RNA sequence: GGGAACGACUCGAGUAGAGUCGAAAAGAUAUGGAACGGUGUUUCUGCGCAUCGUUUGACGUUUGCCCAAGUCGGAAACGACUUGGGCAAACCGAGAUGCGAACUACAGAGACACCGUUCCUAAGUCCUGUAUGUAGAUGUUCGCAUCUACAUACAGAAAAGAAACAACAACAACAAC
Reactivity to DMS in 0.01 (KOAc 150mM, MgCl2 10mM, bicine 150mM(pH8.5), 24C), signal-to-noise 4, nucleotides 027 to 126: g000a070u010a140u010g000g000a030a000c000g000g020u000g010u000u000u000c000u000g000c020g010c010a010u000c000g000u000u010u000g020a170c300g000u000u000u000g010c010c000c000a010a020g020u010c000g010g000a060a070a170c010g010a020c000u000u000g000g000g010c000a000a000a000c000c050g000a100g010a020u000g010c000g000a060a060c090u010a300c010a020g000a020g000a010c010a010c010c000g010u000u000c000c000u000a010a050g000u000c020
Reactivity to 2A3 in 0.01 (KOAc 150mM, MgCl2 10mM, bicine 150mM(pH8.5), 24C), signal-to-noise 2, nucleotides 027 to 126: g000a030u050a010u120g000g000a010a020c000g010g000u000g010u000u010u000c000u030g000c000g010c010a000u010c030g110u050u130u300g130a100c110g010u000u000u010g030c040c000c040a020a010g020u050c000g000g040a040a040a020c010g000a000c030u030u010g000g000g050c000a000a000a000c000c020g070a020g000a030u000g000c000g020a050a020c040u170a060c110a010g010a020g010a010c010a000c000c010g000u010u000c000c000u000a000a000g000u010c000
Chemical mapping of a 177-nucleotide RNA with DMS and 2A3.
The reactions ran in a buffer of 150 mM KOAc, 10 mM MgCl2 and 150 mM bicine (pH 8.5), at 24 C.
Values cover nucleotides 27 to 126.
For 2A3 the reverse transcriptase was SuperScript II with manganese.
The 2A3 profile rests on 7,708 reads.